Conditions: 150 mM KOAc, 10 mM MgCl2 and 150 mM bicine (pH 8.5), 24 C. Chemical mapping of a 207-nucleotide RNA with DMS and 2A3. The data come from the RNA Mapping Database (RMDB), library VIROID. For 2A3, 6,039 sequencing reads were counted. DMS adducts were read by reverse transcription with MarathonRT.
[RMDB]
RNA sequence: GGGAACGACUCGAGUAGAGUCGAAAACCGGUCUUGUCCAACCUCUGUUUCGGCAGAGGAUACCGUGCUCCCAAGCUGUAAGGCUUGGGGCCCGAGAGAAGUCGCUCUCUCUCGCCCUUUACGUCCUCUCAGGCAUAGAGAUGACCAUUUGCCUAGGCAUACCUUGACUGUUCGCAGUCAAGGUAUGAAAAGAAACAACAACAACAAC
Reactivity to DMS in 0.01 (KOAc 150mM, MgCl2 10mM, bicine 150mM(pH8.5), 24C), signal-to-noise 2, nucleotides 027 to 156: c020c030g000g020u010c050u000u010g000u000c000c060a170a230c020c010u020c010u010g030u020u000u000c300g020g020c020a020g000a030g010g030a030u000a040c030c080g020u000g000c060u020c000c010c000a060a170g000c000u010g010u000a240a200g010g000c010u000u000g010g020g010g020c040c070c000g000a120g000a080g020a060a130g030u000c150g000c200u000c080u000c010u030c050u010c020g000c050c030c010u000u000u000a070c100g000u010c010c020u010c040u010c030a080g000g000c030a070u000a110g010a070g010a090u000g000a090c030c040a230u000u000u000g010c010c000u000a160g000g000
Reactivity to 2A3 in 0.01 (KOAc 150mM, MgCl2 10mM, bicine 150mM(pH8.5), 24C), signal-to-noise 6, nucleotides 027 to 156: c030c010g010g010u060c070u100u190g080u050c050c030a040a050c070c030u030c010u020g040u040u060u120c240g140g010c000a000g000a000g000g000a010u050a020c040c010g040u050g010c010u110c000c010c000a000a010g000c020u050g070u300a190a110g050g000c000u010u010g000g000g010g010c010c020c030g020a010g010a000g020a080a050g100u230c080g030c070u020c000u000c000u000c010u010c060g010c000c020c000u080u160u130a090c070g070u040c010c000u030c020u030c090a030g040g000c010a040u070a060g080a000g020a080u140g050a050c020c030a100u080u050u060g010c000c010u020a030g020g040